[RMDB]
RNA sequence: GGGAACGACUCGAGUAGAGUCGAAAAGAAAAGCAUAAACAGGGUUGAUUUUUAAGACCUAUAGCCAUGUUGGCAACAUUUUAAAAAGGACUCUAAAUCUUUUGUAAAUUCAAAAGGCACUAUGGAAUGUUCUGCAGUAGAGAAACCUCUACAGCAAGUAAAUGAUGCAUUUCGAUGCAUCAUUUACAAAAGAAACAACAACAACAAC
Reactivity to 2A3 in 0.01 (KOAc 150mM, MgCl2 10mM, bicine 150mM(pH8.5), 24C), signal-to-noise 1, nucleotides 027 to 156: g110a030a090a000a000g000c020a020u090a050a090a040c030a120g000g000g020u060u010g070a210u040u070u110u050u220a080a070g020a060c030c000u110a060u060a100g020c040c020a070u190g060u210u100g150g040c030a000a080c010a080u150u180u100u140a030a070a000a040a000g080g010a010c000u000c010u090a020a090a180u040c000u080u070u010u010g060u050a080a200a270u290u040c040a000a000a030a030g010g040c030a020c110u090a080u050g000g030a100a030u070g040u070u060c070u110g000c020a020g000u000a010g000a020g000a270a170a020c000c000u000c000u010a020c010a030g000c000a000a150

The record gives the reactivity of an RNA of 207 nucleotides to 2A3. For 2A3 the reverse transcriptase was SuperScript II with manganese. The data come from the RNA Mapping Database (RMDB), library OK3TST. Values cover nucleotides 27 to 156. The reactions ran in a buffer of 150 mM KOAc, 10 mM MgCl2 and 150 mM bicine (pH 8.5), at 24 C.